About this RNA
The record gives the reactivity of an RNA of 207 nucleotides to 2A3 and DMS. For 2A3 the reverse transcriptase was SuperScript II with manganese. The RNA was probed in 150 mM KOAc, 10 mM MgCl2 and 150 mM bicine (pH 8.5) at 24 C. DMS adducts were read by reverse transcription with MarathonRT. Source: RMDB library OK3TST, as collected in RNAgym.
[RMDB]
RNA sequence: GGGAACGACUCGAGUAGAGUCGAAAAUUAUGAAAGGAAAAGUGGCCUGAACUGAGGGACUUUGGGAGAGUGAUGGUUGUCAAGAGGAGGUCACCUCAAAUGUGCUGCUUCUCUAGAAACGGUGAACACGUUGCAAGUAUUUGGUCAUAAAUCUCCAGGAGUAUAUCGUAUUCGUACGAUAUACUCCAAAAGAAACAACAACAACAAC
Reactivity to 2A3 in 0.01 (KOAc 150mM, MgCl2 10mM, bicine 150mM(pH8.5), 24C), signal-to-noise 4, nucleotides 027 to 156: u120u070a060u120g030a020a040a040g050g000a030a090a000a000g020u020g000g020c030c020u040g030a110a020c040u010g010a020g000g010g010a010c040u060u110u090g060g040g020a050g010a050g050u060g020a040u050g040g070u100u130g030u080c070a060a020g010a020g080g020a020g020g020u030c030a150c070c020u060c000a050a090a020u140g050u100g000c000u000g020c000u020u000c030u000c020u020a030g040a040a080a000c010g000g050u070g090a050a000c080a010c080g010u010u030g020c050a070a020g010u050a100u130u070u060g020g010u050c020a020u040a080a090a040u020c020u000c060c010a010
Reactivity to DMS in 0.01 (KOAc 150mM, MgCl2 10mM, bicine 150mM(pH8.5), 24C), signal-to-noise 2, nucleotides 027 to 156: u010u000a070u000g010a130a180a170g000g010a110a030a050a060g060u000g020g000c000c090u000g020a100a190c030u000g010a060g000g030g020a060c110u000u000u020g010g000g010a090g000a100g020u010g010a070u000g030g020u010u020g020u000c070a050a120g000a140g030g030a040g050g010u000c010a100c040c020u000c040a050a060a100u000g020u020g020c020u010g000c030u000u000c000u000c040u010a130g000a110a060a040c050g020g020u000g000a050a060c100a120c080g000u000u010g040c000a050a130g020u000a090u000u000u010g000g000u000c050a040u000a030a070a150u010c020u000c000c000a300